This 177-nucleotide RNA was probed chemically with 2A3. 2A3 adducts were read by reverse transcription with SuperScript II with manganese. Conditions: 150 mM KOAc, 10 mM MgCl2 and 150 mM bicine (pH 8.5), 24 C.
RNA sequence: GGGAACGACUCGAGUAGAGUCGAAAAGAAUUGGUAUGUAAGCUACACCUUCCGGUAGCUGCGUCACACUUUAAGAGUGUGCAUACUGAGCCGAAGCUCAGCUUCGGUCCCCCAAGGGAAGCCCAAACCUGGAGCUCAGUUUCGACUGAGCUCCAGGAAAAGAAACAACAACAACAAC
Reactivity to 2A3 in 0.01 (KOAc 150mM, MgCl2 10mM, bicine 150mM(pH8.5), 24C), signal-to-noise 1, nucleotides 027 to 126: g080a010a060u000u070g010g000u000a000u000g000u000a010a000g030c000u000a020c040a020c010c000u000u020c000c000g000g000u000a000g000c000u000g000c020g000u000c000a000c000a000c000u000u020u260a300a110g170a020g140u000g000u000g030c000a000u010a000c020u030g010a000g010c000c000g000a000a000g010c000u040c300a040g010c000u060u000c000g000g000u010c010c000c000c000c000a000a110g080g000g000a000a000g030c030c000c000a050a090a080